[RMDB]
RNA sequence: GGGAACGACUCGAGUAGAGUCGAAAAAUGCAGUUCUGCAUCUUGGGGUGCAGUGCUAGAGUGAAUGACACAGUAGAGGUGACAGGCUUAGGAUUUAAAUUUGAUAAUGUCAUGAUGCCAUGGGAGCGUAAGCUGGAGAGUUCGCUCUCCAGCUUACAAAAGAAACAACAACAACAAC
Reactivity to DMS in 0.01 (KOAc 150mM, MgCl2 10mM, bicine 150mM(pH8.5), 24C), signal-to-noise 3, nucleotides 027 to 126: a060u000g010c080a040g000u000u010c050u000g010c010a010u000c020u010u010g020g020g020g040u000g000c020a020g040u000g010c020u000a050g020a100g010u000g000a080a070u010g000a110c080a050c070a080g030u000a060g000a080g000g000u000g010a080c070a050g000g000c070u000u000a060g000g010a080u010u000u000a060a060a120u010u010u010g000a070u010a060a080u000g000u000c020a020u000g020a080u000g010c030c020a080u000g000g000g010a080g010c180
Reactivity to 2A3 in 0.01 (KOAc 150mM, MgCl2 10mM, bicine 150mM(pH8.5), 24C), signal-to-noise 2, nucleotides 027 to 126: a020u070g010c010a000g020u060u020c020u040g010c010a020u030c020u130u300g190g040g000g000u030g010c000a000g000u000g040c000u010a020g020a030g050u110g040a080a080u100g010a000c060a010c030a070g080u100a020g010a030g030g050u050g010a030c050a030g020g030c010u050u090a010g000g040a070u070u090u220a120a130a140u130u090u030g100a080u050a240a050u070g030u060c030a010u050g040a040u100g020c000c050a000u030g030g040g000a090g020c040
Source: RMDB library OK2TST, as collected in RNAgym. This 177-nucleotide RNA was probed chemically with DMS and 2A3. The 2A3 profile rests on 1,993 reads.